An RNA of 177 nucleotides, treated with 2A3 and DMS and read out base by base. As a SHAPE reagent, 2A3 marks flexible, mostly unpaired nucleotides at the ribose 2'-OH. Conditions: 150 mM KOAc, 10 mM MgCl2 and 150 mM bicine (pH 8.5), 24 C. For DMS the reverse transcriptase was MarathonRT. It was measured as part of the RMDB library OK2TRN. Values cover nucleotides 27 to 126.
[RMDB]
RNA sequence: GGGAACGACUCGAGUAGAGUCGAAAAGCUUGAUACUGACCUCAUCAAGCAAAGGAAACAAUCACAUCGCGCUUGGAUGCACGAUGUACAUGAGGUUGAUGGCAUUGGAGAUGCUAGCUGAACAAGGCGCUGAAGGAUGGUUCGCCAUCCUUCAGCGAAAAGAAACAACAACAACAAC
Reactivity to 2A3 in 0.01 (KOAc 150mM, MgCl2 10mM, bicine 150mM(pH8.5), 24C), signal-to-noise 4, nucleotides 027 to 126: g000c010u010u010g020a020u040a110c050u050g030a030c000c000u020c000a020u000c000a000a020g040c060a060a020a020g230g020a080a090a050c070a050a090u200c070a020c000a020u010c020g000c020g030c080u150u210g280g100a180u250g040c000a000c000g000a000u010g010u050a000c040a080u160g010a010g000g000u010u030g050a070u070g010g020c030a030u020u100g190g100a170g010a040u040g030c040u020a060g000c040u070g040a060a020c050a090a090g130g010
Reactivity to DMS in 0.01 (KOAc 150mM, MgCl2 10mM, bicine 150mM(pH8.5), 24C), signal-to-noise 2, nucleotides 027 to 126: g030c000u000u010g000a060u010a020c130u010g030a040c050c010u000c110a020u000c000a000a010g030c000a070a110a180g000g010a120a080a140c170a080a060u000c130a070c000a010u000c010g000c010g030c010u010u060g030g020a140u010g020c000a010c000g020a000u000g010u000a080c170a050u020g000a060g010g000u000u010g020a050u000g000g040c030a040u000u010g020g000a100g020a100u010g010c000u000a040g000c040u000g020a090a060c220a110a080g010g010